Structure probing data (2A3) for a 207-nucleotide construct. Values cover nucleotides 27 to 156. 2A3 adducts were read by reverse transcription with SuperScript II with manganese. The RNA was probed in 150 mM KOAc, 10 mM MgCl2 and 150 mM bicine (pH 8.5) at 24 C.

RNA sequence: GGGAACGACUCGAGUAGAGUCGAAAACUGAUGUUCGCAUCAGGCUCGCUCCUAAGUCCUUGUGAGGCGAAUGGGAGAUGGUGUCGGAAACGACACACAUCGAAGAACAUUCGCUACCCACCACAAGGAUAUGGACUCAUAAGCCCUUCGGGGCUAACGGUUAACGUGAGUUCGCUCACGUUAACCGAAAAGAAACAACAACAACAAC
Reactivity to 2A3 in 0.01 (KOAc 150mM, MgCl2 10mM, bicine 150mM(pH8.5), 24C), signal-to-noise 2, nucleotides 027 to 156: c000u000g000a000u000g020u000u100c300g000c230a000u000c000a000g040g060c050u070c100g040c050u020c000c010u090a140a060g050u000c020c000u000u000g000u000g010a010g000g010c010g020a000a000u020g010g000g010a070g000a000u010g010g020u000g000u000c000g010g080a070a040a050c000g010a000c010a000c070a120c010a010u000c000g050a130a040g080a060a000c000a000u000u000c020g000c000u020a010c010c020c020a090c010c010a000c000a000a000g000g000a000u000a000u000g000g000a010c000u000c140a190u200a180a040g000c010c000c000u010u070c250g030g000g000g000c000u000a130a010